The record gives the reactivity of an RNA of 207 nucleotides to 2A3.
The reactions ran in a buffer of 150 mM KOAc, 10 mM MgCl2 and 150 mM bicine (pH 8.5), at 24 C.
The 2A3 profile rests on 526 reads.
RNA sequence: GGGAACGACUCGAGUAGAGUCGAAAAACGCUUUAGCUGCUUAGUUCAGCUACACCUUGGAUAACUUAUUCUAUACGAGUUUUUCAAAGGUGUUGACUAGUAUAGAUUACCGUAAAUGAUUUCUCUAAGUUUAUGGGACAUUUUAGAGAAUAGUUUUCUCGAAUAAAUAGUUCGCUAUUUAUUCGAGAAAAGAAACAACAACAACAAC
Reactivity to 2A3 in 0.01 (KOAc 150mM, MgCl2 10mM, bicine 150mM(pH8.5), 24C), signal-to-noise 1, nucleotides 027 to 156: a000c100g050c060u100u080u020a010g010c000u010g010c060u200u150a030g030u280u100c000a000g000c000u000a010c000a000c020c010u010u010g000g000a000u000a040a000c000u000u050a050u160u000c000u020a020u000a010c010g000a000g010u000u000u020u000u060c040a110a060a100g040g000u080g020u080u010g020a070c080u010a030g000u000a010u000a000g010a000u030u180a040c000c000g010u000a030a000a050u090g000a010u000u050u030c010u000c010u000a010a020g000u000u000u000a010u010g000g000g000a000c000a000u240u300u150u290a020g010a000g000a040a000u010a050g030u000u000u020u000